[RMDB]
RNA sequence: GGGAACGACUCGAGUAGAGUCGAAAAGAUAUGGAGGGGUAACGGAAAUCCAUGCCAGGCUUGGACCUAUGGGUCGGAAACGACCCUGUAGCUAGCCUGAGUGGAUUUCCGUUACCCCUCCUAAGUCGUACGAUACAUUGUUCGCAAUGUAUCGUACAAAAGAAACAACAACAACAAC
Reactivity to DMS in 0.01 (KOAc 150mM, MgCl2 10mM, bicine 150mM(pH8.5), 24C), signal-to-noise 3, nucleotides 027 to 126: g000a100u010a300u000g010g020a020g040g040g010g020u010a010a020c000g000g020a010a010a010u010c020c000a030u010g000c270c010a020g010g000c000u000u010g030g000a140c300c080u000a010u000g000g020g020u000c000g000g000a110a100a240c010g010a010c000c020c000u000g030u000a030g010c000u000a020g000c000c010u010g000a300g000u000g000g000a010u000u000u000c000c010g000u010u000a000c000c000c000c010u000c000c000u000a000a020g020u010c110
Structure probing data (DMS) for a 177-nucleotide construct. DMS adducts were read by reverse transcription with MarathonRT. For DMS, 2,660 sequencing reads were counted. The reactions ran in a buffer of 150 mM KOAc, 10 mM MgCl2 and 150 mM bicine (pH 8.5), at 24 C.